Record summary:
Structure probing data (DMS and 2A3) for a 177-nucleotide construct. The 2A3 profile rests on 3,751 reads. Reactivities are given for positions 27 through 126.
[RMDB]
RNA sequence: GGGAACGACUCGAGUAGAGUCGAAAAAAGAUAUGGACGAAUUGUCAGCGACUUUUUGAUCAAUGAUGAGCGUCGGAAACGACGCUUUGAGAUCGAAGGUCGCUUGGAUUUAUUCGUCCUAAGUCAAGAAAUUACUCUUCUUCGGAAGAGUAAUUUCAAAAGAAACAACAACAACAAC
Reactivity to DMS in 0.01 (KOAc 150mM, MgCl2 10mM, bicine 150mM(pH8.5), 24C), signal-to-noise 2, nucleotides 027 to 126: a100a060g010a030u000a300u000g000g000a020c000g010a040a010u000u010g000u010c020a030g000c010g010a010c000u000u000u000u000u000g010a030u000c000a270a140u020g000a180u020g000a000g000c000g040u000c010g010g000a100a070a220c020g020a020c000g020c000u000u000u000g000a100g000a010u010c000g000a010a010g000g010u000c010g010c010u000u000g010g010a030u020u010u010a010u000u000c000g030u000c000c010u000a010a130g020u000c040a120a180
Reactivity to 2A3 in 0.01 (KOAc 150mM, MgCl2 10mM, bicine 150mM(pH8.5), 24C), signal-to-noise 2, nucleotides 027 to 126: a000a010g140a020u110a080u130g000g010a000c020g020a000a010u010u010g020u050c020a010g000c010g020a000c020u160u170u090u210u300g010a010u000c060a230a300u110g020a030u060g010a040g000c000g000u000c010g000g000a070a070a000c020g010a000c000g000c000u000u010u010g010a000g000a000u010c010g000a010a000g000g000u010c000g010c000u010u060g000g000a010u240u300u170a030u000u050c000g000u000c000c000u010a070a000g030u000c020a000a170
For DMS the reverse transcriptase was MarathonRT. For 2A3 the reverse transcriptase was SuperScript II with manganese. The RNA was probed in 150 mM KOAc, 10 mM MgCl2 and 150 mM bicine (pH 8.5) at 24 C.